[RMDB]
Record summary
Structure probing data (2A3 and DMS) for a 207-nucleotide construct. 2A3 is a SHAPE reagent: it acylates the 2'-hydroxyl of flexible nucleotides of all four kinds. For DMS the reverse transcriptase was MarathonRT. 2A3 adducts were read by reverse transcription with SuperScript II with manganese. Conditions: 150 mM KOAc, 10 mM MgCl2 and 150 mM bicine (pH 8.5), 24 C. The DMS profile rests on 9,453 reads. Source: RMDB library OK3TST, as collected in RNAgym.
RNA sequence: GGGAACGACUCGAGUAGAGUCGAAAAGUGAGGACGUCGAGCGGCUGUGUGAGCACCUCGCCGACCGCAUCGUGCAGAACGGCAGCAAGCGCCCCAACAUCACGAAGGGGUGGCGGGACGCGGCCCGGCUCAUGCUCGACAAGGACGGCCGCACCGACAAUGAUGAAUGUUUCGACAUUCAUCAUUGAAAAGAAACAACAACAACAAC
Reactivity to 2A3 in 0.01 (KOAc 150mM, MgCl2 10mM, bicine 150mM(pH8.5), 24C), signal-to-noise 5, nucleotides 027 to 156: g100u080g020a050g030g050a030c050g020u030c030g010a020g020c020g040g010c030u030g030u030g020u040g120a020g010c020a050c030c040u080c040g000c000c000g030a030c010c000g020c010a050u050c050g070u020g000c040a040g060a290a050c050g070g000c020a030g020c030a150a060g020c020g020c010c000c000c000a040a050c030a110u220c070a020c170g070a090a090g000g030g000g000u020g050g000c000g000g010g010a020c060g000c000g020g010c080c300c020g010g000c020u040c040a030u070g000c010u010c010g040a040c020a020a020g070g020a010c010g040g000c020c000g010c050a070c100c020g020a010
Reactivity to DMS in 0.01 (KOAc 150mM, MgCl2 10mM, bicine 150mM(pH8.5), 24C), signal-to-noise 3, nucleotides 027 to 156: g010u000g000a070g040g000a070c050g050u000c010g010a190g020c040g010g030c040u000g020u000g040u000g010a080g020c040a050c040c020u010c060g020c020c000g020a080c020c000g040c020a150u020c010g010u000g020c090a160g000a080a120c060g020g010c040a160g010c090a100a170g010c030g010c000c010c000c010a030a200c040a120u010c090a140c090g020a120a300g010g010g000g040u000g010g010c050g020g020g000a070c040g010c010g020g000c010c030c030g040g000c050u000c060a070u000g000c010u000c010g010a080c050a050a060g000g010a080c020g030g050c000c000g030c010a110c030c010g010a120